Chemical mapping of a 177-nucleotide RNA with 2A3 and DMS. Values cover nucleotides 27 to 126. The reactions ran in a buffer of 150 mM KOAc, 10 mM MgCl2 and 150 mM bicine (pH 8.5), at 24 C. For DMS, 1,268 sequencing reads were counted. For 2A3 the reverse transcriptase was SuperScript II with manganese.
RNA sequence: GGGAACGACUCGAGUAGAGUCGAAAAGAUAUGGAGCUAGAACUCCUCCAUAUCGUUGAAAUCGGAAACGAUGGAGAUAUGAGAGGUUGCUAGCUCCUAAGUCAAAAGGGUGCGUUCGCGCACCCAAGUUUUAACAUCCCUUCGGGGAUGUUAAAACAAAAGAAACAACAACAACAAC
Reactivity to 2A3 in 0.01 (KOAc 150mM, MgCl2 10mM, bicine 150mM(pH8.5), 24C), signal-to-noise 1, nucleotides 027 to 126: g010a000u060a080u180g000g000a030g000c000u020a000g000a220a180c010u000c000c000u000c010c000a000u010a000u020c000g000u020u050g030a020a020a000u020c010g000g020a000a090a050c010g000a020u020g020g000a020g000a010u000a000u020g300a300g000a010g130g000u200u080g070c000u000a000g010c000u000c000c000u010a030a010g010u010c040a030a030a160a120g050g000g000u010g000c000g030u050u080c260g020c000g000c240a000c010c020c010a000a000
Reactivity to DMS in 0.01 (KOAc 150mM, MgCl2 10mM, bicine 150mM(pH8.5), 24C), signal-to-noise 2, nucleotides 027 to 126: g010a020u000a300u000g000g010a000g030c000u010a000g020a110a190c110u000c030c030u010c030c030a000u000a000u010c010g010u000u040g010a070a130a060u000c000g000g000a160a070a210c000g000a020u000g000g010a040g020a010u000a020u000g020a140g010a000g000g000u000u000g000c000u000a000g010c010u010c000c000u000a010a040g010u010c020a080a090a140a060g000g000g030u000g000c000g010u000u020c240g020c020g000c000a000c010c010c000a010a010

For DMS the reverse transcriptase was MarathonRT.